[RMDB]
RNA sequence: GGGAACGACUCGAGUAGAGUCGAAAAAACAGCCCCAUAUCACUGUUGCCCCACUCAAUCAAACGGAGAUGUUGAGGCUUAGAGCAGAAAGAUUGCUUUCCCAGUGGCAGAGCCAGGAUCAAAAUGCAAUCCAUGACUGGGAACGGUGGUUCACGCCUCCAAUUGUUGGAUUCGUCCAACAAUUGGAAAAAGAAACAACAACAACAAC
Reactivity to 2A3 in 0.01 (KOAc 150mM, MgCl2 10mM, bicine 150mM(pH8.5), 24C), signal-to-noise 2, nucleotides 027 to 156: a000a000c030a010g040c010c020c000c000a040u060a010u090c020a010c030u010g050u070u050g070c000c000c000c000a020c000u020c010a020a120u080c090a150a090a120c140g150g000a070g030a070u060g020u120u080g020a060g000g040c010u090u130a020g000a020g040c030a010g040a070a110a010g050a060u080u120g000c000u000u030u000c020c000c010a010g030u050g050g020c060a020g000a050g180c020c030a060g000g010a030u060c060a070a100a040a030u120g030c030a030a030u000c000c010a040u080g020a060c020u020g030g000g010a010a010c020g040g010u010g010g000u040u050c070a050c130g030c020c020
Reactivity to DMS in 0.01 (KOAc 150mM, MgCl2 10mM, bicine 150mM(pH8.5), 24C), signal-to-noise 1, nucleotides 027 to 156: a010a080c000a080g050c020c010c000c090a040u010a070u000c080a020c010u000g030u010u000g010c040c010c000c010a070c080u000c090a070a130u000c110a090a020a100c060g020g010a120g020a070u010g010u000u010g020a030g030g020c100u000u010a060g010a120g010c000a110g000a110a090a120g000a120u010u010g060c030u010u000u000c000c020c000a150g010u010g030g000c120a150g030a130g080c050c030a130g000g010a080u000c030a040a030a050a100u000g030c040a030a060u030c040c010a110u000g010a070c070u000g010g000g030a050a050c110g030g000u040g000g040u010u010c080a230c000g020c020c060
Source information: The record gives the reactivity of an RNA of 207 nucleotides to 2A3 and DMS. The RNA was probed in 150 mM KOAc, 10 mM MgCl2 and 150 mM bicine (pH 8.5) at 24 C. 2A3 adducts were read by reverse transcription with SuperScript II with manganese.